[RMDB]
RNA sequence: GGGAACGACUCGAGUAGAGUCGAAAAUGCGUAUGGUACCAGUACUGUGCAGUUAAUCAACGCAUGUACCGACAUGCGUUGCGCGUGCGUAUAGCUAGCCGCAACCGUGACGCGUACUAUGACACAUAUACUGGUCGGUUAGCGUCGAUUGGCGUCACGUUAUGCGCUGGUUCGCCAGCGCAUAACGAAAAGAAACAACAACAACAAC
Reactivity to 2A3 in 0.01 (KOAc 150mM, MgCl2 10mM, bicine 150mM(pH8.5), 24C), signal-to-noise 2, nucleotides 027 to 156: u130g000c070g010u120a090u220g000g040u090a040c000c000a000g000u020a000c020u020g050u040g080c000a110g020u080u130a050a000u120c010a030a000c000g030c110a050u080g040u020a110c050c010g090a020c020a000u030g000c000g000u000u000g000c000g000c040g000u020g000c010g020u110a070u120a220g000c000u020a040g050c060c030g000c020a020a030c080c010g000u020g130a020c000g080c070g000u000a010c000u040a080u250g080a050c010a000c030a030u160a010u060a300c000u090g000g000u020c000g070g160u090u070a060g020c000g010u060c040g080a270u060u190g010g020c030g030u080c020a010